[RMDB]
RNA sequence: GGGAACGACUCGAGUAGAGUCGAAAAGUAAAGAAAGAACAGGAUGAGAAGGCAGCAGGGGAUGAGUGUGGAAGGUUUCCAAAAGAAGAGGAGAUCCGCAGAAGGGGCCAGUCAUGUUCCUGGGGCGCUAGGCAAUUAAUUUCGAUUAAUUGCCUAGAAAAGAAACAACAACAACAAC
Reactivity to 2A3 in 0.01 (KOAc 150mM, MgCl2 10mM, bicine 150mM(pH8.5), 24C), signal-to-noise 1, nucleotides 027 to 126: g010u060a020a110a130g070a070a110a010g030a020a010c020a040g000g050a030u090g030a000g020a110a020g050g000c040a030g030c020a000g010g030g000g030a010u030g030a050g080u080g000u050g040g000a040a040g080g000u010u080u050c050c000a000a160a000a050g100a070a020g020a030g030g010a020g000a030u020c000c050g000c030a020g040a110a010g050g000g000g000c000c000a000g060u040c000a040u120g030u060u020c000c000u010g000g010g030g000c060g010
Reactivity to DMS in 0.01 (KOAc 150mM, MgCl2 10mM, bicine 150mM(pH8.5), 24C), signal-to-noise 5, nucleotides 027 to 126: g010u000a070a090a120g010a090a080a090g010a110a090c080a060g000g000a080u010g000a100g000a100a090g010g010c030a050g020c050a030g020g000g000g010a070u010g000a060g010u000g020u010g000g000a070a060g010g000u010u010u000c020c040a050a060a100a140g010a090a080g000a110g000g010a090g000a050u000c040c100g020c110a050g020a080a090g010g020g010g000c050c060a030g000u000c060a050u010g010u010u000c010c010u010g010g010g010g020c300g010